[RMDB]
RNA sequence: GGGAACGACUCGAGUAGAGUCGAAAACCCCCAAGUUUCGACUUGGGGGAAUUAAAAUCACCGGUAAAUAAUUAGCUCGCGUUACCGCUGAACGCGAGCAUAGAGCAAUGCGCUUCGGCGCAUUGAAGUAAAAUUAUCUGUUCGCAGAUAAUUUUACAAAAGAAACAACAACAACAAC
Reactivity to DMS in 0.01 (KOAc 150mM, MgCl2 10mM, bicine 150mM(pH8.5), 24C), signal-to-noise 2, nucleotides 027 to 126: c000c000c000c000c000a000a000g010u000u010u010c160g010a030c010u000u000g010g000g010g000g000a010a010u000u000a030a100a140a100u000c090a110c020c020g000g000u010a090a100a090u010a060a080u020u010a090g010c000u000c000g020c000g010u000u000a030c060c240g010c090u010g010a040a010c010g000c000g000a010g010c000a000u000a030g000a160g000c010a000a000u000g000c000g020c000u000u020c170g040g010c000g030c000a010u000u000g000a040a090
Reactivity to 2A3 in 0.01 (KOAc 150mM, MgCl2 10mM, bicine 150mM(pH8.5), 24C), signal-to-noise 2, nucleotides 027 to 126: c000c000c000c000c020a000a030g000u010u070u210c160g060a020c030u000u000g000g000g000g010g020a000a040u130u100a050a040a020a080u040c050a080c190c030g040g100u170a090a130a090u160a030a170u180u220a060g000c010u010c000g000c000g020u010u030a140c050c030g050c170u060g060a000a000c000g010c000g020a000g000c010a000u010a020g000a010g040c000a000a000u010g000c000g000c000u030u020c230g080g000c000g000c000a000u000u000g000a020a000

Conditions: 150 mM KOAc, 10 mM MgCl2 and 150 mM bicine (pH 8.5), 24 C. The record gives the reactivity of an RNA of 177 nucleotides to DMS and 2A3. For DMS, 2,407 sequencing reads were counted. For 2A3, 2,015 sequencing reads were counted. It was measured as part of the RMDB library M2PK50.